[RMDB]
RNA sequence: GGGAACGACUCGAGUAGAGUCGAAAAGGGCCGUUCACUGGAUCCGAAGCCUCUAGAAGGAUAAUAUAGGCACUCCAUACCCUACUCCGACUCAAUACGUCCCCGUCGUACAGAAUAGUAACAUAUCGAACACAACCUAACUUCGGUUAGGUUGUAAUACUUGGAGUAGUUUCGACUACUCCAAGUAAAAAGAAACAACAACAACAAC
Reactivity to 2A3 in 0.01 (KOAc 150mM, MgCl2 10mM, bicine 150mM(pH8.5), 24C), signal-to-noise 2, nucleotides 027 to 156: g040g040g000c150c060g140u180u120c110a050c120u030g000g070a070u110c010c000g040a060a010g000c010c000u020c020u010a200g050a240a040g120g000a060u110a260a120u190a150u090a200g000g000c020a050c070u000c010c010a060u070a120c010c000c000u030a080c060u000c040c010g020a020c000u000c030a000a220u080a160c010g000u020c000c020c050c000g000u030c030g020u020a070c040a050g060a210a030u060a120g110u060a090a050c000a120u150a030u290c090g030a110a020c010a000c000a100a000c000c010u010a000a000c010u040u020c050g010g000u000u000a010g000g000u000u000g000u000a000a000
Reactivity to DMS in 0.01 (KOAc 150mM, MgCl2 10mM, bicine 150mM(pH8.5), 24C), signal-to-noise 1, nucleotides 027 to 156: g010g000g080c010c000g000u010u000c050a070c070u020g040g010a120u000c020c040g010a210a230g010c000c000u000c050u010a150g010a150a070g020g020a170u000a080a130u000a100u000a100g000g040c100a070c050u000c050c000a200u000a110c040c030c010u020a080c000u000c030c040g010a030c010u040c000a110a180u020a130c000g010u000c000c000c000c020g010u000c030g010u000a170c060a180g020a080a080u000a140g000u000a060a120c040a060u000a070u020c070g000a090a140c100a100c000a000a000c000c000u000a000a000c000u000u000c230g050g000u000u000a000g000g000u000u000g000u050a000a080